[RMDB]
RNA sequence: GGGAACGACUCGAGUAGAGUCGAAAAAAUCGAAGUAAAUGCUAACGACGAAAAGUUUGCAUUGGCCGCCUAACAGCCGCCUUGGGUUGUAACUGACCUCGAAACAGAAAAGUUACUGACAAGGGCUGCUUUCAUUUCCUUUCGAGGAAAUGAAAGCAAAAGAAACAACAACAACAAC
Reactivity to DMS in 0.01 (KOAc 150mM, MgCl2 10mM, bicine 150mM(pH8.5), 24C), signal-to-noise 2, nucleotides 027 to 126: a040a090u020c050g020a210a090g040u050a040a050a000u040g000c000u020a000a020c000g000a270c080g000a190a050a020a140g010u000u000u000g000c010a000u000u000g020g000c060c060g050c010c060u000a010a150c120a040g050c000c000g000c060c000u000u000g010g090g020u010u020g020u000a000a000c000u010g000a300c190c060u020c080g020a130a020a050c300a000g000a000a030a210a030g040u000u000a040c010u010g020a040c020a000a020g000g030g030c070u000
Reactivity to 2A3 in 0.01 (KOAc 150mM, MgCl2 10mM, bicine 150mM(pH8.5), 24C), signal-to-noise 2, nucleotides 027 to 126: a000a040u230c130g050a130a000g060u140a020a010a010u000g010c030u050a040a010c030g140a020c120g110a070a040a050a040g000u000u000u060g000c000a000u000u030g010g030c000c010g000c000c000u050a110a090c030a040g000c000c040g060c030c000u060u020g080g080g080u020u030g000u010a000a000c000u000g050a030c000c020u030c100g070a060a090a040c040a050g080a000a120a000a000g030u010u000a010c020u050g030a020c060a040a040g010g040g000c000u000